[RMDB]
RNA sequence: GGGAACGACUCGAGUAGAGUCGAAAACCGCAGCCAAGCCCCUACGUGUGGUGUCCGUAAUACAGACAUUCCAUAUGGGGAAGGUUCAGAGACUAAAUGGGUGUGGGUGCGUUACUCUCGAAGUGACAAGCUUAAGAUAUAGUCCGGCUUCAGUAGACAUGUGUACUCUGUUCGCAGAGUACACAUGAAAAGAAACAACAACAACAAC
Reactivity to 2A3 in 0.01 (KOAc 150mM, MgCl2 10mM, bicine 150mM(pH8.5), 24C), signal-to-noise 4, nucleotides 027 to 156: c030c010g000c030a010g010c010c000a100a110g010c000c010c000c010u040a050c120g020u010g040u080g020g020u000g000u010c020c010g050u050a040a030u080a090c040a020g010a000c010a010u260u100c070c010a030u040a040u170g000g000g010g000a010a030g010g000u010u060c060a060g090a020g000a090c040u090a080a050a150u160g070g000g020u090g010u020g030g030g000u040g010c020g020u040u040a020c010u010c020u080c140g090a220a010g010u020g030a040c010a040a030g010c010u070u080a090a050g060a070u110a030u060a100g020u000c020c030g050g000c000u130u090c040a100g050u130a020g020a060
Reactivity to DMS in 0.01 (KOAc 150mM, MgCl2 10mM, bicine 150mM(pH8.5), 24C), signal-to-noise 3, nucleotides 027 to 156: c020c020g010c100a190g000c010c060a040a110g010c100c000c010c030u020a030c050g040u030g010u010g000g020u010g010u000c000c010g040u020a120a160u010a300c130a060g000a030c000a040u000u000c040c000a050u000a060u000g000g010g060g020a090a080g040g010u010u000c070a090g000a140g040a110c040u000a050a140a130u010g010g010g040u010g050u020g000g020g030u010g000c200g000u000u000a080c020u000c020u010c060g010a050a090g030u000g000a030c040a080a230g000c010u010u000a090a120g020a110u010a070u000a070g000u000c040c040g000g030c000u000u010c040a100g010u030a140g000a270